[RMDB]
RNA sequence: GGGAACGACUCGAGUAGAGUCGAAAAUGCAAGUAGUGCAAUUGUUGGAAUCACCGUACCUAUUUAGGUUUACGCUCCAAGAUCGGUGGAUAGCAGCCCUAUCAAUAUCUAGGAGAACUGUGCUAUGAAAACGGUAUUGGCUUCGGCCAAUACCGAACAUUUGUACUGACUUCGGUCAGUACAAAUGAAAAGAAACAACAACAACAAC
Reactivity to 2A3 in 0.01 (KOAc 150mM, MgCl2 10mM, bicine 150mM(pH8.5), 24C), signal-to-noise 4, nucleotides 027 to 156: u190g000c050a060a050g060u070a030g060u050g050c020a020a080u040u040g050u040u080g040g060a080a090u160c050a040c020c000g020u010a010c000c000u080a160u220u220u300a050g000g000u000u090u080a030c040g000c060u040c010c000a010a010g020a030u040c070g050g130u050g050g070a010u030a010g050c050a030g050c060c000c000u030a030u010c040a020a050u030a020u220c020u030a040g010g020a010g010a030a020c030u020g020u020g060c010u050a010u170g120a050a070a060a000c000g010g010u000a000u000u000g010g010c010u030u050c130g030g000c000c000a000a000u000a000c000c000g000a000a000
Reactivity to DMS in 0.01 (KOAc 150mM, MgCl2 10mM, bicine 150mM(pH8.5), 24C), signal-to-noise 2, nucleotides 027 to 156: u000g010c000a110a240g020u000a050g000u010g010c010a030a060u000u000g000u000u010g020g020a130a100u000c000a050c020c000g000u000a020c000c020u000a220u000u000u000a020g000g000u000u000u000a060c060g000c000u000c000c010a020a080g000a050u000c160g030g010u010g010g020a080u000a030g000c050a220g000c150c090c050u000a070u000c020a080a130u000a070u000c060u000a190g030g010a100g010a010a030c040u000g010u010g010c010u000a040u000g000a100a010a150a110c020g000g050u000a010u000u000g010g000c020u010u020c300g030g000c000c010a010a010u000a000c000c010g000a010a060